An RNA of 177 nucleotides, treated with 2A3 and DMS and read out base by base.
For DMS, 1,069 sequencing reads were counted.
Conditions: 150 mM KOAc, 10 mM MgCl2 and 150 mM bicine (pH 8.5), 24 C.
2A3 adducts were read by reverse transcription with SuperScript II with manganese.
The data come from the RNA Mapping Database (RMDB), library OK2TRN.
RNA sequence: GGGAACGACUCGAGUAGAGUCGAAAAACUUGUUUGAAGGGACCAAGGUGGUGCCCUUACAAUCAGACUUCAAGUACAUACACUGUGUGGCUAGUAUGUUCGCUCACAAUGGAUAAUGCCAUGUCAAACCGGAUGGAAAGUUCGCUUUCCAUCCGGUAAAAGAAACAACAACAACAAC
Reactivity to 2A3 in 0.01 (KOAc 150mM, MgCl2 10mM, bicine 150mM(pH8.5), 24C), signal-to-noise 1, nucleotides 027 to 126: a000c020u000u130g010u020u000u070g020a000a010g010g000g030a000c020c000a130a160g300g160u210g010g000u300g270c000c000c000u000u030a020c000a010a020u020c010a050g040a090c020u090u010c150a040a010g040u020a040c020a090u080a060c000a060c090u040g040u000g000u010g140g000c010u000a000g050u030a050u070g020u060u060c010g020c030u020c080a060c000a000a070u080g050g020a010u020a140a050u140g020c040c020a020u040g060u100c000a110a070
Reactivity to DMS in 0.01 (KOAc 150mM, MgCl2 10mM, bicine 150mM(pH8.5), 24C), signal-to-noise 2, nucleotides 027 to 126: a050c090u000u000g030u020u000u000g000a030a000g040g000g000a060c010c010a200a120g030g020u000g050g030u000g010c010c010c000u030u000a100c080a010a020u000c030a040g010a160c070u000u000c070a050a050g000u000a050c160a070u020a080c020a050c070u000g010u010g030u000g000g010c010u000a070g000u000a050u000g000u000u000c140g020c030u000c050a050c100a080a100u010g000g000a080u000a090a120u010g020c000c030a040u000g010u010c120a040a160
For 2A3, 964 sequencing reads were counted. Values cover nucleotides 27 to 126.